RNA sequence: GGGAACGACUCGAGUAGAGUCGAAAACUUCACUAUCCCCGACAUGGAGAUCUUCAACGCUGAUAAGUCUGAGGGUUUCGUCGUGAAGAGCUACAAGGAGUCUUGGAUGGGCAAGGAUGCUGAUGUGGGCCUGUAAAAGAUUCGUCUUUUACAGGCCAAAAGAAACAACAACAACAAC
Reactivity to DMS in 0.01 (KOAc 150mM, MgCl2 10mM, bicine 150mM(pH8.5), 24C), signal-to-noise 3, nucleotides 027 to 126: c050u000u000c050a070c070u000a110u000c030c000c020c060g000a090c090a110u010g020g000a020g010a020u000c040u000u000c040a020a080c250g020c080u020g000a170u030a080a070g030u000c070u010g000a070g020g000g010u000u000u000c010g030u010c080g020u000g010a070a090g010a100g020c060u000a070c070a070a090g010g000a120g000u010c040u020u000g000g000a080u010g010g000g010c060a060a080g010g000a050u010g010c040u010g000a070u000g000u000g030
Reactivity to 2A3 in 0.01 (KOAc 150mM, MgCl2 10mM, bicine 150mM(pH8.5), 24C), signal-to-noise 2, nucleotides 027 to 126: c000u060u070c000a030c070u090a070u070c000c000c000c000g030a030c020a120u190g080g010a010g020a050u020c000u070u030c030a030a030c060g020c040u060g090a190u140a280a050g060u000c070u000g010a000g000g010g000u030u020u050c030g010u020c040g000u020g000a000a010g040a030g070c030u060a070c040a060a060g030g010a050g040u000c010u080u060g090g010a050u100g060g060g030c010a020a030g010g000a020u070g000c010u080g020a090u070g050u130g140
An RNA of 177 nucleotides, treated with DMS and 2A3 and read out base by base.
For 2A3, 1,685 sequencing reads were counted.
Reactivities are given for positions 27 through 126.
In probing experiments dimethyl sulfate is read out at A N1 and C N3, which are open when not base-paired.
Conditions: 150 mM KOAc, 10 mM MgCl2 and 150 mM bicine (pH 8.5), 24 C.
For 2A3 the reverse transcriptase was SuperScript II with manganese.
The data come from the RNA Mapping Database (RMDB), library OK2TRN.